[RMDB]
RNA sequence: GGGAACGACUCGAGUAGAGUCGAAAAUGCUCGGUGAUGCGACACUGGCGCAAGAAUUUGCCAAUGCAUUGCUGAAAGAAGGCAUUUACGUUACAGGCUUCUUCUAUCCGGUGGUGCCGAAAGGUCAUGCCGUAUGAACUUUCGAGUUCAUACGGCAAAAAGAAACAACAACAACAAC
Reactivity to DMS in 0.01 (KOAc 150mM, MgCl2 10mM, bicine 150mM(pH8.5), 24C), signal-to-noise 3, nucleotides 027 to 126: u010g000c000u010c030g020g020u000g010a020u000g030c010g010a110c180a120c150u010g010g000c040g030c150a130a110g010a060a190u010u020u000g010c020c030a040a070u010g000c020a050u000u000g000c020u000g010a090a100a100g000a110a150g000g000c020a020u000u000u000a060c120g010u000u030a080c130a120g010g000c040u010u000c030u000u010c020u000a080u010c050c060g000g000u000g020g010u000g000c040c040g010a050a050a050g010g020u000c100a100
Reactivity to 2A3 in 0.01 (KOAc 150mM, MgCl2 10mM, bicine 150mM(pH8.5), 24C), signal-to-noise 1, nucleotides 027 to 126: u040g030c040u050c030g000g030u000g000a010u040g010c020g100a010c010a040c160u030g040g000c010g000c070a120a060g120a200a130u180u120u260g020c010c010a000a000u080g000c000a010u000u000g010c000u000g040a130a110a000g080a020a030g070g000c030a000u040u030u100a070c050g050u070u040a040c020a120g040g000c050u050u000c000u130u000c010u080a130u090c020c000g040g050u070g030g010u060g000c010c000g070a080a030a000g020g020u050c030a040